[RMDB]
RNA sequence: GGGAACGACUCGAGUAGAGUCGAAAAGCUCUAGGAGACUAGAGCGAUACGUUAGAGAGCACGUGGCAUGACUAACGGAUAGCCAGGUACGAGGUUGCCAGAGGACAUAGCUAUAGCUAUGUCCAAACAGCUAUCAUACCUUCGGGUAUGAUAGCUGAAAAGAAACAACAACAACAAC
Reactivity to DMS in 0.01 (KOAc 150mM, MgCl2 10mM, bicine 150mM(pH8.5), 24C), signal-to-noise 2, nucleotides 027 to 126: g000c000u000c000u010a000g000g010a300g020a200c000u010a000g000a020g030c000g010a040u030a030c020g020u000u000a020g010a280g000a130g000c110a000c160g000u010g020g000c020a070u020g040a130c020u000a060a000c040g000g010a070u040a060g000c000c040a150g010g000u000a020c150g050a080g020g000u010u000g020c020c010a080g010a210g000g030a000c000a010u000a000g000c000u050a120u030a080g020c000u000a000u000g010u010c000c030a010a020a170
Reactivity to 2A3 in 0.01 (KOAc 150mM, MgCl2 10mM, bicine 150mM(pH8.5), 24C), signal-to-noise 1, nucleotides 027 to 126: g000c010u030c000u010a000g030g030a010g070a140c000u000a000g000a000g020c000g000a000u010a030c010g000u020u010a030g020a000g020a020g140c000a010c080g020u030g060g000c060a080u070g070a060c010u030a060a000c030g080g000a040u110a070g090c070c050a020g040g030u020a060c110g070a120g020g090u050u010g000c000c010a030g060a110g000g000a000c000a000u010a000g000c010u140a010u030a210g000c000u000a000u060g010u000c000c000a000a000a000